An RNA of 177 nucleotides, treated with 2A3 and DMS and read out base by base.
For 2A3 the reverse transcriptase was SuperScript II with manganese.
The DMS profile rests on 1,796 reads.
Conditions: 150 mM KOAc, 10 mM MgCl2 and 150 mM bicine (pH 8.5), 24 C.
DMS adducts were read by reverse transcription with MarathonRT.
2A3 is a SHAPE reagent: it acylates the 2'-hydroxyl of flexible nucleotides of all four kinds.
[RMDB]
RNA sequence: GGGAACGACUCGAGUAGAGUCGAAAACGCUCACUUCGGCGAUCGACGUGAUGUGCUUGAGCUCCGGCACAUCGAAGCGCAUCGCCAUCAGCUCGAGCGUCAGCGUGGUCGUGGCGAUCGUCGAUUAACUGAUCGGGCUAUUCGUAGCCCGAUCAGUAAAAGAAACAACAACAACAAC
Reactivity to 2A3 in 0.01 (KOAc 150mM, MgCl2 10mM, bicine 150mM(pH8.5), 24C), signal-to-noise 1, nucleotides 027 to 126: c040g010c000u000c020a090c110u080u070c100g010g000c000g010a000u010c010g100a080c050g090u180g030a020u030g040u050g000c000u060u090g080a060g010c010u070c040c010g000g020c030a030c010a030u080c040g030a120a080g020c030g000c010a030u020c040g000c020c000a010u020c020a010g040c010u060c070g000a020g010c020g040u030c000a010g020c030g070u100g020g070u080c040g080u060g080g030c040g040a040u000c010g070u010c010g000a020u100u160a030
Reactivity to DMS in 0.01 (KOAc 150mM, MgCl2 10mM, bicine 150mM(pH8.5), 24C), signal-to-noise 2, nucleotides 027 to 126: c150g010c020u000c020a180c150u000u000c070g020g010c020g000a040u000c030g000a110c050g000u000g000a020u010g020u000g000c010u000u020g020a180g010c070u040c130c070g010g000c020a020c040a030u010c040g000a040a100g000c060g010c110a050u000c030g020c020c010a070u010c100a040g010c070u000c160g000a040g010c020g010u000c100a070g030c090g010u000g020g000u000c060g000u000g000g000c020g020a020u000c030g000u010c030g030a130u000u000a090